[RMDB]
RNA sequence: GGGAACGACUCGAGUAGAGUCGAAAACACAUGGUCUGCUCUUGUGACUAUUAGUCUCGAAAUAUGGCAUAAAACAAGGGGGAACGGAUCUUGCGACAUUGGUGGUUCCUCUAUGAUCCUCCAAUUACGAUAGAAUCUUCUUCGGAAGAUUCUAUCGAAAAGAAACAACAACAACAAC
Reactivity to 2A3 in 0.01 (KOAc 150mM, MgCl2 10mM, bicine 150mM(pH8.5), 24C), signal-to-noise 2, nucleotides 027 to 126: c030a010c000a040u050g000g020u010c010u020g050c010u020c000u030u020g010u040g040a060c020u020a030u120u100a060g030u010c020u000c120g080a070a080a060u230a130u150g010g000c050a030u010a080a060a020a010c020a030a050g000g020g010g020g020a050a010c000g010g010a020u010c000u020u070g020c040g020a030c040a120u030u040g050g000u000g020g000u030u030c020c020u020c040u070a170u220g020a050u030c010c000u000c000c000a010a060u120u070a080
Reactivity to DMS in 0.01 (KOAc 150mM, MgCl2 10mM, bicine 150mM(pH8.5), 24C), signal-to-noise 2, nucleotides 027 to 126: c080a110c080a050u010g020g010u000c020u000g010c030u000c030u000u000g030u000g000a070c090u010a080u000u010a080g000u000c010u000c080g000a070a120a150u010a080u000g000g010c010a100u000a050a070a150a030c080a020a050g010g000g020g020g040a130a200c110g010g010a020u000c000u000u000g010c050g000a110c140a060u000u010g000g020u000g000g010u000u000c000c060u000c120u010a050u010g000a190u000c020c000u000c030c040a060a040u020u010a130

Source: RMDB library RFMREP, as collected in RNAgym. An RNA of 177 nucleotides, treated with 2A3 and DMS and read out base by base. The RNA was probed in 150 mM KOAc, 10 mM MgCl2 and 150 mM bicine (pH 8.5) at 24 C. For DMS, 1,390 sequencing reads were counted. Reactivities are given for positions 27 through 126. For 2A3 the reverse transcriptase was SuperScript II with manganese.